[RMDB]
RNA sequence: GGGAACGACUCGAGUAGAGUCGAAAAACCAAGUCUGGGGGCCGAUGAGGGUUGGCUCAAGGUAGGGUUUUGACUUGAAAACUCAAGCUGUGACCCCAAAACGAUGGAGGUAAAUGAGAAUCCUCCUAAAACUAUGGACACUUCGGUGUCCAUAGAAGCGUGUUGAAUAGUUCGCUAUUCAACACGCAAAAGAAACAACAACAACAAC
Reactivity to 2A3 in 0.01 (KOAc 150mM, MgCl2 10mM, bicine 150mM(pH8.5), 24C), signal-to-noise 2, nucleotides 027 to 156: a010c040c000a020a020g060u050c080u050g160g000g000g030g000c030c040g070a130u090g040a070g020g030g020u050u050g020g020c020u010c000a010a020g030g000u080a090g020g020g000u060u040u110u050g010a050c010u020u050g050a160a050a080a080c050u010c000a020a010g020c050u050g090u130g240a140c030c000c010c000a040a110a000a020c140g090a020u120g000g010a030g000g010u150a110a090a090u250g030a020g010a080a040u020c000c000u000c010c000u020a050a030a000a000c000u000a000u010g000g000a000c000a000c010u030u030c070g050g000u000g000u060c000c000a010u000a000g000a000a000